Structure probing data (2A3 and DMS) for a 207-nucleotide construct.
RNA sequence: GGGAACGACUCGAGUAGAGUCGAAAACCUCACAGUAUCGUAUUUCAAAAUUCGGCUUUGUCAUUUAGCAGUGUGUGGAGGUGUACAUGUUGCCAAUCGAUACAUGUAAGGUGUCCAGUGGUUUGGUCCAGAAAGGUGACACAACUCCAUGGAUGCACCUGAGCAUGUAUUUCGAUACAUGCUCAGGAAAAGAAACAACAACAACAAC
Reactivity to 2A3 in 0.01 (KOAc 150mM, MgCl2 10mM, bicine 150mM(pH8.5), 24C), signal-to-noise 5, nucleotides 027 to 156: c000c000u020c000a040c010a020g040u030a060u060c030g020u060a140u030u190u180c150a080a100a080a060u160u070c040g030g010c050u130u050u100g070u080c060a110u070u120u220a050g020c050a020g030u050g000u040g000u060g150g070a070g000g030u070g040u070a020c020a030u100g060u100u090g150c030c010a030a060u040c020g010a020u000a060c030a060u030g000u040a070a050g050g000u010g010u000c030c020a030g080u040g080g000u030u030u050g000g020u000c010c020a010g200a090a100a040g180g040u210g050a010c080a010c000a180a020c030u020c030c000a020u020g020g000a010u040g050c030a050
Reactivity to DMS in 0.01 (KOAc 150mM, MgCl2 10mM, bicine 150mM(pH8.5), 24C), signal-to-noise 2, nucleotides 027 to 156: c020c020u010c030a040c020a070g000u000a020u010c030g040u000a050u000u000u000c060a090a040a120a230u000u000c030g010g030c030u000u000u000g030u000c050a130u000u000u020a100g010c000a040g000u010g040u020g030u010g010g030a050g000g030u000g030u000a050c090a090u000g020u000u010g030c000c060a100a140u000c030g010a060u000a020c020a100u000g000u010a100a050g030g000u000g000u000c000c010a130g040u010g030g000u000u000u000g000g040u040c000c030a170g000a090a080a120g030g020u000g000a160c030a080c070a030a010c060u000c040c060a110u000g010g010a080u000g040c130a180